[RMDB]
RNA sequence: GGGAACGACUCGAGUAGAGUCGAAAAAGGGAAGAAAAUAAUUUAGAAAGGAGAUUCCGCCCCAGCUUGCGGUGCGGCCGAACGGCUGUAAGGCAUCCCGGAGAGGGGAGGCAAGGCGAAAGCCAAAAACGGUACACCAUCUUCGGAUGGUGUACAACCCAACAUAUAACUUCGGUUAUAUGUUGGGAAAAGAAACAACAACAACAAC
Reactivity to 2A3 in 0.01 (KOAc 150mM, MgCl2 10mM, bicine 150mM(pH8.5), 24C), signal-to-noise 1, nucleotides 027 to 156: a040g080g020g040a020a050g050a050a160a000a130u190a060a100u160u170u300a090g030a070a130a010g100g030a050g020a050u140u000c010c030g000c000c020c010c000a000g040c030u060u150g060c040g040g000u090g030c080g020g010c020c010g030a100a000c070g010g000c030u050g010u030a050a020g020g000c030a030u020c000c030c000g000g020a090g000a020g000g000g000g000a020g000g010c040a020a070g030g000c030g010a030a020a000g020c010c030a140a020a000a040a000c060g000g020u010a000c000a000c000c000a000u040c030u000u030c050g130g020a000u000g000g020u000g000u000a000c000a000a010